[RMDB]
RNA sequence: GGGAACGACUCGAGUAGAGUCGAAAAUUAUCGUAAAAUCAGAAAUACAUUAAGAUUUAUGUUAGGUAACAUUAACGAUUUCAAUCCUGACACAGAUAGCAUUCCUGAAUCAGAGUUAUUAGAAGUGCUUUUGUUUAACCUUCGGGUUAAACAAAAGAAAAGAAACAACAACAACAAC
Reactivity to DMS in 0.01 (KOAc 150mM, MgCl2 10mM, bicine 150mM(pH8.5), 24C), signal-to-noise 2, nucleotides 027 to 126: u000u010a050u000c060g000u020a090a080a080a090u020c000a080g000a110a060a100u010a050c030a180u000u000a210a170g000a100u000u000u000a080u030g000u000u000a030g010g000u000a080a080c090a040u030u020a060a080c130g000a050u000u000u000c220a110a030u000c070c000u010g030a050c090a020c090a060g000a030u010a030g020c120a040u000u000c010c010u010g010a080a080u000c140a060g000a130g000u010u030a070u000u000a100g030a140a070g000u000g000